[RMDB]
RNA sequence: GGGAACGACUCGAGUAGAGUCGAAAAAUAGAAUUCAGGAGAAGCUGAGUUCAAUGGCAGCUUGCACACUGGUCACAGAGUCCACCCGCAGAGCCAGAGUUGCUCUGCCACAAGCCACUCCCUCAUCACUCAGGGUGGGAAUGCAACUUGCCAAGACCCUGAGAGUGUAGUUCGCUACACUCUCAGGAAAAGAAACAACAACAACAAC
Reactivity to 2A3 in 0.01 (KOAc 150mM, MgCl2 10mM, bicine 150mM(pH8.5), 24C), signal-to-noise 1, nucleotides 027 to 156: a010u110a000g000a010a010u020u020c020a000g020g070a230g110a150a090g160c000u000g000a000g000u020u000c030a000a110u050g000g000c000a020g010c070u000u050g000c030a020c000a010c060u070g010g000u210c070a080c040a170g040a050g020u000c010c000a010c030c010c000g060c090a040g000a000g030c030c030a050g010a000g140u060u090g000c010u020c040u070g030c000c010a030c040a010a000g020c010c020a030c040u010c010c050c010u120c050a120u090c000a030c050u060c050a030g040g010g000u000g010g000g000a060a010u040g000c000a000a000c000u080u120g020c020c000a010a130g050a070c010